Source: RMDB library OK1LIB, as collected in RNAgym.
Structure probing data (DMS and 2A3) for a 177-nucleotide construct.
DMS (dimethyl sulfate) methylates the pairing face of unpaired adenines and cytosines.
Reactivities are rounded to 0.1 and cut off at 0 and 3.
For DMS, 3,547 sequencing reads were counted.

RNA sequence: GGGAACGACUCGAGUAGAGUCGAAAAGCUCGUCCACUCCGAUCGAGCCACUAGGAGCUAUCGGAACUCUUAGCGGAGUGACCGAAUCUGUCGACUUCAGUUGGACAUCGUCAGAUCGAGGUCCAAAGACGAUUGAUGGCUUCGGCUAUCGAUCGUCAAAAGAAACAACAACAACAAC
Reactivity to DMS in 0.01 (KOAc 150mM, MgCl2 10mM, bicine 150mM(pH8.5), 24C), signal-to-noise 2, nucleotides 027 to 126: g010c300u010c020g000u010c040c030a030c040u010c010c030g000a050u020c040g000a050g000c030c050a220c030u040a010g000g000a060g030c040u030a080u050c170g010g040a300a100c020u000c000u000u000a070g000c120g000g000a020g000u000g000a060c040c000g000a030a040u010c030u000g000u000c010g000a060c210u030u030c100a280g060u000u000g000g000a110c300a200u010c020g000u000c300a280g000a110u100c070g020a230g000g000u050c000c080a060a190a210
Reactivity to 2A3 in 0.01 (KOAc 150mM, MgCl2 10mM, bicine 150mM(pH8.5), 24C), signal-to-noise 8, nucleotides 027 to 126: g020c000u020c020g040u040c050c010a030c020u000c010c000g040a100u100c050g030a020g030c010c010a020c020u050a030g040g000a030g020c030u070a080u200c080g060g050a060a050c000u000c000u030u040a030g020c020g030g010a010g020u040g030a050c000c000g000a020a030u010c010u020g030u020c010g020a070c000u120u030c190a300g060u230u220g120g000a020c010a080u010c000g000u000c030a020g000a190u220c090g080a080g020g050u000c020c030a060a150a050